[RMDB]
RNA sequence: GGGAACGACUCGAGUAGAGUCGAAAACUUACCUGGGCCAGGCUUUGCUGUGUAGGAAUCAGAGCUGCAUCAGACCUGGCCCCAGCACUUGAAGUGCUCCCACAGGGAACAGGAGGACUUGUGUGCAGGUGACCUUUGGGAGACUAACUGUGCACAAGUCAUGCACCCUAUUCGUAGGGUGCAUGACAAAAGAAACAACAACAACAAC
Reactivity to DMS in 0.01 (KOAc 150mM, MgCl2 10mM, bicine 150mM(pH8.5), 24C), signal-to-noise 1, nucleotides 027 to 156: c000u000u010a080c070c010u030g010g050g080c000c010a100g030g070c040u000u000u000g020c100u010g040u010g000u050a080g020g000a180a180u020c210a140g020a170g030c000u000g000c020a110u000c080a050g020a050c000c010u000g010g010c010c000c000c000a040g010c040a030c030u000u010g000a080a150g010u000g020c010u000c010c000c010a150c080a080g050g010g030a060a100c150a070g010g040a150g010g010a040c010u010u010g010u020g030u000g000c000a010g000g000u000g030a170c010c020u000u000u000g010g020g010a110g020a090c100u010a250a020c010u000g040u000g020c060a050c010a050a150
Reactivity to 2A3 in 0.01 (KOAc 150mM, MgCl2 10mM, bicine 150mM(pH8.5), 24C), signal-to-noise 3, nucleotides 027 to 156: c040u090u130a110c000c000u040g000g000g000c000c000a010g030g000c060u060u100u060g020c010u020g020u030g030u110a050g090g130a100a100u270c090a110g020a060g140c010u020g000c000a000u040c030a010g170a300c000c000u010g010g000c030c030c000c000a000g010c000a000c020u070u060g060a070a010g030u070g160c020u000c020c000c000a070c040a000g010g010g000a060a050c020a060g090g070a070g030g130a080c000u160u100g110u050g050u090g180c050a020g000g040u040g050a070c000c000u060u070u070g000g000g000a000g010a000c000u010a010a030c010u010g010u030g020c000a000c050a110a020
Chemical mapping of a 207-nucleotide RNA with DMS and 2A3.
2A3 adducts were read by reverse transcription with SuperScript II with manganese.
Conditions: 150 mM KOAc, 10 mM MgCl2 and 150 mM bicine (pH 8.5), 24 C.
For DMS the reverse transcriptase was MarathonRT.
For DMS, 1,604 sequencing reads were counted.
Values cover nucleotides 27 to 156.